Background:
An RNA of 207 nucleotides, treated with 2A3 and read out base by base.
[RMDB]
RNA sequence: GGGAACGACUCGAGUAGAGUCGAAAAACGGUCGUACGCGACCGAGGCGCGGCUAGGUCGACGGACCGAACAAUGGCAUCCCGCAUUCUGCCAUCCGCCGCGCAGCUUCUUCUCAAACGGUGCGGAUAAAAGUAGGACACCUUCGGGUGUCCUACAAGUAUCGAUCCCACUUCGGUGGGAUCGAUACAAAAGAAACAACAACAACAAC
Reactivity to 2A3 in 0.01 (KOAc 150mM, MgCl2 10mM, bicine 150mM(pH8.5), 24C), signal-to-noise 1, nucleotides 027 to 156: a000c030g020g000u000c010g040u030a050c290g010c000g160a000c000c000g000a030g030g000c000g000c030g000g060c000u000a010g000g000u010c000g110a180c180g230g040a000c000c000g010a000a000c000a000a000u000g000g000c000a050u130c040c020c000g000c000a020u300u150c000u020g010c000c000a000u000c030c020g000c020c020g020c000g000c000a000g050c010u140u060c010u040u000c030u030c050a080a090a080c080g000g010u000g000c030g010g000a000u160a020a100a000a010g000u010a000g010g000a000c000a000c010c000u080u160c240g050g000g010u000g000u000c000c000u000a000c000a000a000
Conditions: 150 mM KOAc, 10 mM MgCl2 and 150 mM bicine (pH 8.5), 24 C. The data come from the RNA Mapping Database (RMDB), library M2RFPK.